[RMDB]
RNA sequence: GGGAACGACUCGAGUAGAGUCGAAAAAGAAUUGUACCACCACUGCGUAUCCUAAACGGGCUCUGCAGUGGUUAUUCUUUUAAAGUACUAGGAGUGAAUAGUGGCCCGUAUUGCAGGCAUUAACAUUAAAAGGCAAUCCACUUCGGUGGAUUGCCAACAACUAGACAUGCUUCGGCAUGUCUAGUUGAAAAGAAACAACAACAACAAC
Reactivity to 2A3 in 0.01 (KOAc 150mM, MgCl2 10mM, bicine 150mM(pH8.5), 24C), signal-to-noise 1, nucleotides 027 to 156: a000g030a000a010u100u000g020u090a080c060c040a010c000c000a000c000u000g010c000g020u030a120u140c010c020u140a150a140a020c080g000g000g000c060u000c170u220g010c000a000g010u000g000g000u000u000a000u000u000c000u000u000u010u170a040a020a020g100u160a060c070u070a000g050g070a020g050u050g040a050a120u030a080g070u060g090g030c040c010c010g040u070a110u080u180g030c050a040g010g000c060a030u100u100a150a050c000a010u130u130a120a120a000a000g030g000c000a010a010u000c000c000a010c000u040u070c220g000g000u000g010g030a000u000u000g000c000c000a000a000
Reactivity to DMS in 0.01 (KOAc 150mM, MgCl2 10mM, bicine 150mM(pH8.5), 24C), signal-to-noise 1, nucleotides 027 to 156: a020g010a010a060u010u000g000u000a090c030c080a160c000c000a000c020u000g010c000g000u000a080u000c000c010u000a060a060a090c130g020g010g020c070u000c040u030g020c010a000g020u010g030g030u010u000a000u000u000c010u050u010u000u000a050a140a150g010u010a090c050u000a060g020g030a120g010u010g000a100a040u000a050g050u000g020g000c030c010c030g010u010a120u000u010g040c010a050g010g030c060a040u010u010a060a120c080a120u020u000a040a060a100a230g020g070c010a010a010u000c000c000a010c000u000u010c300g050g020u010g000g000a020u000u010g010c050c000a010a010